[RMDB]
RNA sequence: GGGAACGACUCGAGUAGAGUCGAAAACAUUGAUGAUCCUGCGUCGUUGGAUCAGAUCCGCCAGGCGAUGGAAGAGUAGGUUAUUGUCGGAUGCGUCGCGCGGUGCAUCCGGCACUGUGUGCCGAUGCGGACUUGGGCUUUUCGAAGCCCAAGUCCGAAAAGAAACAACAACAACAAC
Reactivity to DMS in 0.01 (KOAc 150mM, MgCl2 10mM, bicine 150mM(pH8.5), 24C), signal-to-noise 1, nucleotides 027 to 126: c030a120u000u000g000a180u000g000a070u000c000c000u000g000c120g020u010c090g010u020u000g010g000a040u000c030a040g000a230u000c060c050g000c020c090a210g000g000c040g000a050u020g000g000a040a120g010a100g000u000a010g010g000u010u000a190u000u000g020u000c040g000g010a010u000g040c000g010u000c090g010c180g040c120g000g020u000g010c000a040u000c040c090g000g000c010a010c050u020g000u020g000u000g000c020c000g010a070u000g030
Reactivity to 2A3 in 0.01 (KOAc 150mM, MgCl2 10mM, bicine 150mM(pH8.5), 24C), signal-to-noise 1, nucleotides 027 to 126: c020a090u110u180g010a060u070g000a000u050c000c010u030g030c030g200u110c040g050u120u030g010g030a050u020c000a010g030a050u050c010c070g040c040c040a000g020g000c030g100a090u090g020g060a060a020g010a080g090u130a070g060g050u160u130a170u190u000g010u030c000g040g020a000u040g000c000g030u020c030g000c030g090c230g170g020u000g020c010a020u020c030c000g000g000c000a000c000u060g030u000g030u080g000c000c000g010a020u100g070